RNA sequence: GGGAACGACUCGAGUAGAGUCGAAAAAACGCGCCGCUAGUGCUUGUGCUGUACUCGACUAAAACAGUUUUACCGCUUAAUUUAGCUGCUGCAAUGCCAACCGAAUCUAUUAGCUGAUUCGCCGCAAGAGUGAUUGUAAUUGACUGAGUACCAUUAAACUCUCUCUAGUUUUCGAACUAGAGAGAGUAAAAGAAACAACAACAACAAC
Reactivity to DMS in 0.01 (KOAc 150mM, MgCl2 10mM, bicine 150mM(pH8.5), 24C), signal-to-noise 2, nucleotides 027 to 156: a090a060c040g000c070g020c040c030g060c040u020a060g030u000g000c000u000u000g030u000g000c010u000g020u000a040c030u000c000g020a120c040u000a060a110a090a130c070a110g000u010u000u000u010a070c060c070g020c070u010u000a080a140u000u010u000a060g030c020u000g000c000u000g010c030a070a100u000g000c040c030a090a120c110c020g000a050a030u000c020u000a220u010u000a110g010c140u000g000a090u010u010c020g030c020c050g030c050a070a080g020a110g020u000g020a090u000u000g010u000a030a100u000u010g000a090c050u000g010a070g010u000a080c000c020a120u000u000a070a140
Reactivity to 2A3 in 0.01 (KOAc 150mM, MgCl2 10mM, bicine 150mM(pH8.5), 24C), signal-to-noise 4, nucleotides 027 to 156: a010a010c080g040c050g010c060c040g000c020u050a030g020u030g020c050u050u060g040u040g010c010u020g000u020a020c020u030c090g050a030c060u090a020a020a110a030c060a050g030u040u050u050u110a060c060c040g000c030u080u100a090a100u210u110u100a030g020c020u060g000c020u030g000c020a020a070u040g020c030c030a050a040c040c010g000a010a010u000c020u030a090u170u120a130g100c060u030g010a040u040u010c010g020c040c050g000c050a050a020g040a030g090u110g040a090u120u030g030u080a060a120u080u080g030a040c040u020g010a010g040u030a070c020c000a020u090u160a160a090